RNA sequence: GGGAACGACUCGAGUAGAGUCGAAAAGCGGCCUGGAUCCACAUCCGCGCGUAGUCGGACUCGUUGAGCGCGAUCGGGAUGGUGUUGAUGCCGAAGAAGUUCGUCGCCAUCAGCACGCCGUGGAGGGCUGACGAAAAGGCUUCGGCCUUUUCGUCAGAAAAGAAACAACAACAACAAC
Reactivity to DMS in 0.01 (KOAc 150mM, MgCl2 10mM, bicine 150mM(pH8.5), 24C), signal-to-noise 4, nucleotides 027 to 126: g020c060g010g000c010c020u000g000g010a130u000c030c050a150c040a100u000c090c020g000c020g020c060g000u000a140g010u010c030g010g020a150c140u020c090g020u000u010g020a130g010c020g010c010g000a060u010c140g010g000g020a040u000g010g020u000g010u000u000g010a020u000g020c180c010g000a020a040g010a120a100g010u000u000c040g000u010c040g020c290c010a000u000c010a020g000c010a020c020g000c070c030g010u000g010g010a080g000g000g000
Reactivity to 2A3 in 0.01 (KOAc 150mM, MgCl2 10mM, bicine 150mM(pH8.5), 24C), signal-to-noise 2, nucleotides 027 to 126: g050c030g000g050c000c030u090g080g090a050u030c000c020a010c000a110u030c040c040g020c000g000c020g060u050a040g090u070c070g050g110a200c100u030c170g150u110u180g080a060g010c050g010c010g000a050u110c040g100g030g030a060u080g120g000u020g000u010u020g000a000u010g000c080c040g020a030a010g060a040a000g170u160u110c060g030u020c020g080c060c000a010u000c000a000g000c010a020c020g020c030c010g020u020g000g030a020g000g050g000